[RMDB]
RNA sequence: GGGAACGACUCGAGUAGAGUCGAAAAAGCAUGCUGGCUACAUGAUUGUGGCAAGAUAACGACACCUGAAUUUGUCGUGGAUAAAUCGACAAAACUGGAAUUAAUCUAUGACCGUAUUCAUGAAAUACUAUCCGUGCUUGUUCGCAAGCACGGAUAGAAAAGAAACAACAACAACAAC
Reactivity to 2A3 in 0.01 (KOAc 150mM, MgCl2 10mM, bicine 150mM(pH8.5), 24C), signal-to-noise 2, nucleotides 027 to 126: a000g010c060a060u100g020c010u080g120g020c070u020a030c000a000u030g000a080u050u060g010u010g000g000c020a000a010g000a020u020a050a050c100g090a020c030a120c050c000u100g040a180a170u040u010u020g000u010c000g000u020g000g000a180u240a220a160a070u070c010g000a020c000a000a030a050a000c030u070g000g050a060a070u070u060a070a050u120c030u030a210u090g070a230c020c040g010u040a030u000u050c020a030u050g060a060a020a020u190a060
Reactivity to DMS in 0.01 (KOAc 150mM, MgCl2 10mM, bicine 150mM(pH8.5), 24C), signal-to-noise 1, nucleotides 027 to 126: a090g020c040a130u010g010c100u010g000g020c050u000a220c050a010u000g020a080u000u010g050u000g050g000c040a040a000g000a020u000a080a030c080g010a140c150a170c000c000u010g030a070a050u000u020u000g010u000c000g040u000g020g030a130u020a110a100a160u000c030g010a060c020a020a010a040a130c150u030g010g010a130a070u000u010a040a040u000c030u000a040u020g000a070c060c050g010u000a020u000u000c010a100u000g010a090a030a010u040a140
Chemical mapping of a 177-nucleotide RNA with 2A3 and DMS. DMS adducts were read by reverse transcription with MarathonRT. For DMS, 898 sequencing reads were counted. The 2A3 profile rests on 1,178 reads. Values cover nucleotides 27 to 126.